[RMDB]
RNA sequence: GGGAACGACUCGAGUAGAGUCGAAAAGCAACGCAAAGCCGCGGCAAGUGGAGUUAGCGAGAAGAGACUAGACUUUGGUUUCUUCAAGUGAAGCGGUCACCAAUCAGGUGUGGUAGUUACCGUAAAAAUAACCGCUCUUUGUUCGCAAAGAGCGGAACUAACUGAAGGACUUCGGUCCUUCAGUUAGAAAAGAAACAACAACAACAAC
Reactivity to DMS in 0.01 (KOAc 150mM, MgCl2 10mM, bicine 150mM(pH8.5), 24C), signal-to-noise 1, nucleotides 027 to 156: g000c020a050a020c040g020c050a050a070a220g050c040c060g000c000g000g040c030a070a050g010u000g050g010a130g020u000u000a230g040c080g040a300g000a060a050g000a070g020a050c000u000a130g010a140c110u000u000u000g000g010u000u000u000c050u110u000c010a040a300g000u000g000a060a140g000c010g000g010u010c000a050c040c040a050a010u010c180a150g030g000u000g000u010g030g020u000a110g040u000u000a030c020c040g030u000a000a060a060a010a040u010a060a180c010c000g020c000u000c020u000u000u000g030u020u020c260g000c000a000a010a030g030a030g050c000g000g000a040a020
Reactivity to 2A3 in 0.01 (KOAc 150mM, MgCl2 10mM, bicine 150mM(pH8.5), 24C), signal-to-noise 1, nucleotides 027 to 156: g040c020a000a060c020g000c070a070a060a000g000c030c010g020c000g050g040c060a050a070g010u080g020g130a110g040u130u150a040g040c010g030a010g000a040a000g020a000g000a000c020u060a040g050a080c030u210u230u230g000g000u000u000u000c000u000u000c010a040a000g010u050g080a070a000g000c000g020g020u040c000a000c020c060a070a040u200c050a110g050g030u030g040u040g140g030u030a090g070u040u110a030c010c010g030u110a000a000a060a060a000u120a050a130c000c010g000c000u000c000u010u020u000g020u050u080c210g020c070a000a000a000g000a000g000c040g000g000a000a000
An RNA of 207 nucleotides, treated with DMS and 2A3 and read out base by base. The reactions ran in a buffer of 150 mM KOAc, 10 mM MgCl2 and 150 mM bicine (pH 8.5), at 24 C. It was measured as part of the RMDB library M2RFPK. The 2A3 profile rests on 779 reads. For DMS the reverse transcriptase was MarathonRT. For 2A3 the reverse transcriptase was SuperScript II with manganese. The DMS profile rests on 1,522 reads.